This 177-nucleotide RNA was probed chemically with 2A3 and DMS. The RNA was probed in 150 mM KOAc, 10 mM MgCl2 and 150 mM bicine (pH 8.5) at 24 C. Reactivities are given for positions 27 through 126.

RNA sequence: GGGAACGACUCGAGUAGAGUCGAAAACAUCUUGGCGACAUCCGUGCAGUACUCGCUGGAUCUGGAGUACUCCGGCGCGGUAGUGAAGCCGAUCUGGUUGUUGACGAUGAUGUGGAUGGUGCCGCCACGUAAUGCACCUAUUCGUAGGUGCAUUACGAAAAGAAACAACAACAACAAC
Reactivity to 2A3 in 0.01 (KOAc 150mM, MgCl2 10mM, bicine 150mM(pH8.5), 24C), signal-to-noise 2, nucleotides 027 to 126: c000a030u030c020u100u290g030g000c000g030a020c010a030u000c020c000g020u050g010c010a010g030u020a030c010u010c050g230c080u100g040g160a150u020c080u160g050g030a050g000u030a030c040u000c040c060g100g000c040g010c020g000g020u080a090g000u020g100a080a020g000c000c010g010a050u040c070u150g090g000u040u050g020u010u060g000a060c050g030a060u130g000a040u060g000u040g080g030a040u060g070g000u050g040c000c050g000c020c000a050
Reactivity to DMS in 0.01 (KOAc 150mM, MgCl2 10mM, bicine 150mM(pH8.5), 24C), signal-to-noise 4, nucleotides 027 to 126: c100a080u010c050u000u000g020g030c000g010a220c030a040u010c030c040g020u000g010c040a100g010u000a040c020u000c020g020c070u000g010g000a090u010c130u010g000g000a070g010u000a020c030u010c170c110g010g010c060g020c080g010g030u010a100g030u010g010a090a300g020c010c010g010a070u010c120u010g000g020u000u000g010u000u000g000a100c070g020a090u000g020a040u000g030u000g000g020a220u010g010g010u000g010c050c050g010c010c030a150